This 207-nucleotide RNA was probed chemically with 2A3. Conditions: 150 mM KOAc, 10 mM MgCl2 and 150 mM bicine (pH 8.5), 24 C. For 2A3 the reverse transcriptase was SuperScript II with manganese.

RNA sequence: GGGAACGACUCGAGUAGAGUCGAAAAACACGGUCACCAGGGGCACCGCGUCCACCGUGGCCCUCGUCCGUGACGGGUACGCGUCCCUGCCCGGUCCGCUGUGCCACGGGAUGAUCGCGAAGGACGGCCGGGUCCACAUGGUCGGCUGGGGCCGGACCCAACAACAGGUGUUCGCACCUGUUGUUGGAAAAGAAACAACAACAACAAC
Reactivity to 2A3 in 0.01 (KOAc 150mM, MgCl2 10mM, bicine 150mM(pH8.5), 24C), signal-to-noise 1, nucleotides 027 to 156: a000c100a000c000g020g010u050c040a110c270c010a020g000g030g020g000c030a030c040c040g000c010g020u060c000c030a020c040c000g000u000g000g020c000c000c010u000c000g090u000c040c020g050u010g070a090c000g020g000g000u170a080c000g000c100g200u110c000c000c040u040g000c000c000c000g000g070u040c060c010g000c070u050g040u030g000c000c000a030c030g020g000g030a080u100g020a060u170c070g010c030g070a140a070g000g010a010c000g000g020c030c000g030g000g020u000c010c000a050c030a090u060g010g000u010c050g010g030c030u020g010g000g030g000c000c000g000g010a000c000
Source: RMDB library OK3TST, as collected in RNAgym.
For 2A3, 1,036 sequencing reads were counted.